[RMDB]
This 177-nucleotide RNA was probed chemically with DMS and 2A3. Conditions: 150 mM KOAc, 10 mM MgCl2 and 150 mM bicine (pH 8.5), 24 C. It was measured as part of the RMDB library OK2TRN. For 2A3, 5,393 sequencing reads were counted.
RNA sequence: GGGAACGACUCGAGUAGAGUCGAAAAGAUAAUCAAUAUCUUGUGUUCAGUAUUUUCGAUGCCCGUAACGACACAAGAAUCUUUGAAACCGUACUUGACAAGUUUCUUCCAUCUUGGGUAUCAGAAGAAAUUCACCUGUAUUCGUACAGGUGAAUUUAAAAGAAACAACAACAACAAC
Reactivity to DMS in 0.01 (KOAc 150mM, MgCl2 10mM, bicine 150mM(pH8.5), 24C), signal-to-noise 6, nucleotides 027 to 126: g010a030u000a130a190u030c220a150a110u020a300u000c000u000u000g000u000g010u010u000c080a200g020u010a080u000u000u000u000c080g010a040u000g000c010c010c030g000u010a060a080c110g010a040c000a020c010a020a030g010a060a050u000c020u000u000u000g000a060a040a060c010c060g010u010a090c170u000u000g000a080c150a090a160g000u000u000u000c010u000u000c050c040a100u010c160u010u000g020g010g020u000a020u000c020a080g010a060a100g010
Reactivity to 2A3 in 0.01 (KOAc 150mM, MgCl2 10mM, bicine 150mM(pH8.5), 24C), signal-to-noise 5, nucleotides 027 to 126: g000a000u130a080a160u230c120a080a060u050a060u250c000u000u000g010u000g030u080u090c070a100g050u100a230u100u180u040u110c050g020a010u030g010c020c010c000g020u040a070a040c060g020a000c000a000c000a020a010g010a040a010u000c010u030u000u020g030a020a010a010c020c020g050u040a070c110u120u150g080a050c050a120a080g000u020u010u000c000u040u010c030c020a130u080c110u100u110g010g000g000u000a000u020c020a060g080a110a020g040